An RNA of 177 nucleotides, treated with 2A3 and read out base by base. The data come from the RNA Mapping Database (RMDB), library OK1LIB. 2A3 is a SHAPE reagent: it acylates the 2'-hydroxyl of flexible nucleotides of all four kinds. Values are in units of 0.01, from 0 to 300, in steps of 10. The RNA was probed in 150 mM KOAc, 10 mM MgCl2 and 150 mM bicine (pH 8.5) at 24 C. 2A3 adducts were read by reverse transcription with SuperScript II with manganese.

[RMDB]
RNA sequence: GGGAACGACUCGAGUAGAGUCGAAAAAUGAUCGGCGUCCUUGCGCAGCACCAGGGUGGCCCGGGGACGGGUCGGCAGAAUGUUCUCCACGAGGUUGGGCCGGUUGAUGGUCCGCCAGAUCUCGCGCACUCGAGGGCGGUUUCGACCGCCCUCGAGUAAAAGAAACAACAACAACAAC
Reactivity to 2A3 in 0.01 (KOAc 150mM, MgCl2 10mM, bicine 150mM(pH8.5), 24C), signal-to-noise 1, nucleotides 027 to 126: a020u120g000a030u090c010g000g010c000g070u000c000c000u030u110g060c070g060c000a020g000c000a030c030c000a010g290g000g000u190g000g010c000c010c060g070g000g000g030a070c050g000g000g110u050c020g000g000c000a000g070a130a060u030g170u050u000c030u000c040c000a020c000g070a140g110g000u190u300g210g000g040c010c060g050g080u150u130g190a300u270g000g000u000c000c000g040c000c000a030g030a040u040c000u000c000g000c000g000c050